[RMDB]
RNA sequence: GGGAACGACUCGAGUAGAGUCGAAAAUUGCGACAGAGAUUAGUGAAAAGUUGGUUGUACUAUUACCGUUAAAAUUUGGAGAUUAUCUGUCGUCUUCAAGUAUGCGUUCAUUAAUUGAUAUUGGCGCCGUAUCCUUGAGUUUCGACUCAAGGAUACGAAAAGAAACAACAACAACAAC
Reactivity to DMS in 0.01 (KOAc 150mM, MgCl2 10mM, bicine 150mM(pH8.5), 24C), signal-to-noise 4, nucleotides 027 to 126: u020u010g000c070g020a030c010a010g000a090g000a110u030u010a090g010u000g040a070a070a080a100g010u020u010g010g000u010u010g010u030a060c170u010a100u030u000a100c070c060g010u020u050a020a070a060a050u010u000u000g000g000a010g000a000u010u020a060u010c020u000g000u010c030g020u000c010u010u020c020a020a020g010u010a090u020g010c030g010u020u030c030a010u000u000a040a140u030u030g020a160u010a050u010u010g000g000c010g000c020
Reactivity to 2A3 in 0.01 (KOAc 150mM, MgCl2 10mM, bicine 150mM(pH8.5), 24C), signal-to-noise 3, nucleotides 027 to 126: u100u150g030c000g010a000c010a000g050a010g030a040u090u160a180g080u110g100a060a070a130a030g120u150u190g070g010u040u170g010u030a000c000u040a030u240u140a040c000c000g060u150u160a020a110a120a110u020u010u010g060g000a060g000a020u030u040a100u280c010u030g030u040c000g000u020c000u030u010c000a000a000g020u000a040u110g010c000g000u020u140c040a010u020u140a250a060u060u070g140a040u040a030u210u100g030g010c010g000c000

An RNA of 177 nucleotides, treated with DMS and 2A3 and read out base by base. The data come from the RNA Mapping Database (RMDB), library OK1LIB. The reactions ran in a buffer of 150 mM KOAc, 10 mM MgCl2 and 150 mM bicine (pH 8.5), at 24 C. For DMS the reverse transcriptase was MarathonRT. For 2A3 the reverse transcriptase was SuperScript II with manganese.